An RNA of 177 nucleotides, treated with DMS and 2A3 and read out base by base. For DMS the reverse transcriptase was MarathonRT. Conditions: 150 mM KOAc, 10 mM MgCl2 and 150 mM bicine (pH 8.5), 24 C. For DMS, 2,746 sequencing reads were counted. It was measured as part of the RMDB library OK2TST.
[RMDB]
RNA sequence: GGGAACGACUCGAGUAGAGUCGAAAACAUGACCUUCAACGAGCUCCCGUCGGACACGCGGACCGACGUGUCGUUGGUGUUGCGUAUGCACCAUGGCGGAGACUUCGUCAUUGAGCCGUUGCCGAACGCAACUAAUGCGUUUCGACGCAUUAGUUGCAAAAGAAACAACAACAACAAC
Reactivity to DMS in 0.01 (KOAc 150mM, MgCl2 10mM, bicine 150mM(pH8.5), 24C), signal-to-noise 3, nucleotides 027 to 126: c180a110u000g010a060c050c050u000u000c100a120a050c040g000a040g000c100u000c070c000c020g010u000c020g010g010a030c020a020c020g020c030g020g000a150c240c100g000a010c000g010u000g010u000c020g030u000u000g020g010u010g020u000u000g010c230g030u010a050u010g000c010a020c040c000a050u010g000g010c010g000g010a200g000a050c040u000u010c000g010u000c150a140u000u010g000a030g010c010c020g020u000u000g010c040c020g000a080a080c180
Reactivity to 2A3 in 0.01 (KOAc 150mM, MgCl2 10mM, bicine 150mM(pH8.5), 24C), signal-to-noise 5, nucleotides 027 to 126: c050a080u220g040a020c010c020u070u080c060a040a010c010g000a010g010c010u040c020c050c000g000u020c020g030g010a010c010a000c070g060c050g070g200a200c100c060g110a150c010g020u050g040u060c070g080u120u070g000g020u000g020u030u070g040c090g030u140a050u140g020c000a020c010c010a030u060g010g020c030g070g000a110g040a050c010u100u050c080g030u020c020a090u000u130g010a000g000c010c010g010u000u020g100c020c020g030a090a020c080